[RMDB]
RNA sequence: GGGAACGACUCGAGUAGAGUCGAAAAGAUAUGGAGUACAGCUUGGAUUUAUGUGUGGUGUCGGAAACGACACGUAACAUCACAUUGUCAGCUGACUCCUAAGUCAAAAGGUUAGUUCGCUAACCAACAAACUCACCAACUUCGGUUGGUGAGUUUGAAAAGAAACAACAACAACAAC
Reactivity to DMS in 0.01 (KOAc 150mM, MgCl2 10mM, bicine 150mM(pH8.5), 24C), signal-to-noise 1, nucleotides 027 to 126: g000a000u000a300u020g000g020a020g000u000a180c000a010g000c010u000u010g030g010a030u010u010u030a000u010g010u000g020u000g010g030u010g040u020c010g000g000a080a100a270c010g020a030c000a010c000g020u030a020a220c100a050u020c010a020c020a020u000u010g000u030c020a010g000c000u000g010a040c000u000c030c000u020a040a050g000u010c040a060a060a100a060g020g010u000u000a010g000u000u010c290g000c000u010a010a020c010c000a080a130
Reactivity to 2A3 in 0.01 (KOAc 150mM, MgCl2 10mM, bicine 150mM(pH8.5), 24C), signal-to-noise 1, nucleotides 027 to 126: g000a030u020a010u170g040g010a030g010u100a300c000a010g080c050u200u300g180g010a100u250u300u150a020u060g010u000g000u060g030g030u020g020u000c010g000g040a050a050a030c000g000a000c000a000c030g000u010a040a040c000a070u090c010a020c020a020u030u070g060u070c000a000g000c000u000g000a000c000u050c000c000u000a060a070g040u000c060a040a000a040a140g000g000u000u000a000g020u060u030c230g000c170u000a000a000c060c000a000a030